[RMDB]
RNA sequence: GGGAACGACUCGAGUAGAGUCGAAAAUGGGGUUAAGGGGAAUAAGGGGAAAAAUAUACAUAUAUGUAUACCCCUAUACAUAUAUGUAUCUUCGGGGUAUAAGGGGUAUAAGGGGGUAUAAGGGGGAAUGAUAAUACGUAUUCGUACGUAUUAUCAUAAAAGAAACAACAACAACAAC
Reactivity to 2A3 in 0.01 (KOAc 150mM, MgCl2 10mM, bicine 150mM(pH8.5), 24C), signal-to-noise 2, nucleotides 027 to 126: u050g010g000g030g040u130u150a100a030g050g000g010g020a070a120u170a050a140g050g000g000g040a030a120a000a000a000u130a000u000a000c000a000u000a000u000a000u030g000u000a000u030a010c000c010c010c000u000a010u000a000c010a030u000a000u000a000u000g000u030a030u010c020u090u030c030g030g000g010g050u020a020u040a080a050g000g020g000g000u000a020u010a030a020g050g050g000g000g000u030a100u080a220a040g000g010g000g000g010a010